[RMDB]
RNA sequence: GGGAACGACUCGAGUAGAGUCGAAAAGUACGUAGAGUGUCGGCAAGCUCUAUAUAUGGACACUUACGAAGGGUUUUGGUUGUUUUGUAUCUCAAGCCGACUUUGAGUAUAUGAGGAAAAUACGACAUGAAUCCUGUGACGUUCGCGUCACAGGAAAACCUACUUUAUGAUUCGUCAUAAAGUAGGUAAAAGAAACAACAACAACAAC
Reactivity to DMS in 0.01 (KOAc 150mM, MgCl2 10mM, bicine 150mM(pH8.5), 24C), signal-to-noise 2, nucleotides 027 to 156: g040u010a020c020g030u000a010g030a030g020u000g030u010c010g030g030c120a130a280g030c070u010c030u000a090u000a080u010a050u010g000g010a140c040a030c020u010u010a120c060g000a120a120g020g010g010u000u010u010u000g020g020u000u000g020u000u000u000u020g010u000a100u000c050u000c050a070a120g000c010c030g010a050c050u000u000u000g000a090g020u000a050u000a070u000g010a100g010g000a040a090a050a140u010a090c050g010a040c030a040u000g000a090a180u000c000c010u010g020u000g030a030c020g000u000u000c300g030c020g020u000c000a010c000a020g010g000a000a000a030
Reactivity to 2A3 in 0.01 (KOAc 150mM, MgCl2 10mM, bicine 150mM(pH8.5), 24C), signal-to-noise 3, nucleotides 027 to 156: g010u010a030c050g000u020a020g020a030g160u040g010u020c030g050g080c100a120a060g010c020u000c050u050a090u060a080u020a040u200g140g040a020c040a030c130u080u100a040c130g080a050a070g020g010g000u040u070u150u140g030g000u010u010g020u030u030u010u010g030u060a080u010c030u000c080a050a010g010c020c000g010a040c030u030u010u020g040a060g040u070a020u000a060u140g040a080g030g040a010a040a070a010u120a060c090g040a030c030a070u190g100a090a040u010c000c000u000g010u000g000a010c010g000u020u030c120g010c010g080u000c000a000c000a000g010g050a000a020a000
Record summary
The record gives the reactivity of an RNA of 207 nucleotides to DMS and 2A3. The reactions ran in a buffer of 150 mM KOAc, 10 mM MgCl2 and 150 mM bicine (pH 8.5), at 24 C. For DMS the reverse transcriptase was MarathonRT. It was measured as part of the RMDB library M2RFPK.